[RMDB]
Annotation: An RNA of 177 nucleotides, treated with DMS and 2A3 and read out base by base.
RNA sequence: GGGAACGACUCGAGUAGAGUCGAAAAGGAACUAUCCGCUGCUUGGAGGAAUUUCGCGAGAUCCUGCCCACAAGGGUGCUGCACUCGGAUAAUCGUUUUCGAGCGGCUGCUGCACCACACGCUGUGAGUAGUCGGUACGAUUCGUCGUACCGACUACAAAAGAAACAACAACAACAAC
Reactivity to DMS in 0.01 (KOAc 150mM, MgCl2 10mM, bicine 150mM(pH8.5), 24C), signal-to-noise 2, nucleotides 027 to 126: g010g010a100a090c050u000a110u000c090c070g000c050u000g000c100u000u000g000g000a130g030g000a030a150u000u000u010c070g010c080g010a060g020a110u000c010c000u000g000c030c020c010a110c170a070a110g000g010g010u000g030c000u000g020c020a100c010u000c020g010g020a050u000a120a140u000c130g010u000u010u000u000c020g000a020g010c120g010g020c090u010g000c090u000g000c020a010c000c020a120c130a070c160g000c100u000g020u000g000a210
Reactivity to 2A3 in 0.01 (KOAc 150mM, MgCl2 10mM, bicine 150mM(pH8.5), 24C), signal-to-noise 2, nucleotides 027 to 126: g000g020a010a090c010u040a130u020c000c010g060c060u110g070c020u060u130g100g040a080g030g090a090a140u090u120u200c170g020c000g040a030g000a030u000c000c000u000g020c000c040c000a000c050a060a110g110g020g020u020g050c040u040g010c000a010c010u000c040g000g010a050u060a080a160u170c180g050u020u030u010u060c020g000a050g030c070g280g000c040u030g040c020u040g000c030a020c000c000a000c000a020c060g110c070u090g020u090g190a050